[RMDB]
RNA sequence: GGGAACGACUCGAGUAGAGUCGAAAAGAUAUGGAGCGCUAGGACAUGCCAAACUAGGAUUGGUGUACAGUCGGAAACGACUGUACACCAAUCCUAGCACUGGCAACAGCCUAAACGCUCCUAAGUCCAUACCCAUUUACUUCGGUAAAUGGGUAUGAAAAGAAACAACAACAACAAC
Reactivity to DMS in 0.01 (KOAc 150mM, MgCl2 10mM, bicine 150mM(pH8.5), 24C), signal-to-noise 1, nucleotides 027 to 126: g010a100u000a300u010g000g010a010g040c000g030c040u000a050g010g000a060c090a300u000g040c000c000a030a150a220c000u000a010g000g000a040u010u000g000g000u010g020u000a000c000a010g030u000c020g000g000a120a080a300c000g020a020c000u000g030u000a000c010a010c000c000a020a000u010c000c010u000a000g020c020a040c300u000g010g000c000a010a110c240a200g010c000c000u000a030a120a130c000g020c000u000c000c000u000a010a040g020u000c020